[RMDB]
RNA sequence: GGGAACGACUCGAGUAGAGUCGAAAAGAAGGAGGCGACUUGCAUUUGUUUACUCGUCCACGAGUUGGACCUUUUAACUUCGUCAAAGCCACCCUGUCCUUCAUGGGUGUUUCACCACAGAAUGUGCAUUAAAUACGAUGUUCGCAUCGUAUUUAAUAAAAGAAACAACAACAACAAC
Reactivity to DMS in 0.01 (KOAc 150mM, MgCl2 10mM, bicine 150mM(pH8.5), 24C), signal-to-noise 9, nucleotides 027 to 126: g010a060a040g010g000a130g000g010c020g000a060c080u020u010g000c070a090u010u020u010g000u010u010u010a030c090u000c220g000u010c050c060a080c040g010a090g010u030u010g020g000a080c010c040u000u010u010u010a030a060c040u000u020c100g000u020c050a040a060a090g000c040c020a090c070c000c040u000g000u000c030c020u010u010c080a130u010g000g000g020u010g010u000u010u010c020a090c230c020a030c080a110g000a090a090u030g010u010g000c220
Reactivity to 2A3 in 0.01 (KOAc 150mM, MgCl2 10mM, bicine 150mM(pH8.5), 24C), signal-to-noise 9, nucleotides 027 to 126: g060a020a020g030g030a020g010g020c060g050a070c050u040u050g020c040a130u080u050u150g070u020u070u060a050c030u040c040g030u030c020c020a040c060g120a090g050u130u020g020g010a020c010c010u010u080u030u120a050a050c010u070u060c040g110u100c040a060a040a030g020c020c010a050c030c000c000u040g060u060c010c010u040u060c040a110u090g060g000g020u050g000u010u030u040c030a030c030c000a050c020a060g220a200a130u230g060u090g070c040
An RNA of 177 nucleotides, treated with DMS and 2A3 and read out base by base. The RNA was probed in 150 mM KOAc, 10 mM MgCl2 and 150 mM bicine (pH 8.5) at 24 C. DMS adducts were read by reverse transcription with MarathonRT. For DMS, 40,530 sequencing reads were counted. In probing experiments dimethyl sulfate is read out at A N1 and C N3, which are open when not base-paired. It was measured as part of the RMDB library OK1LIB.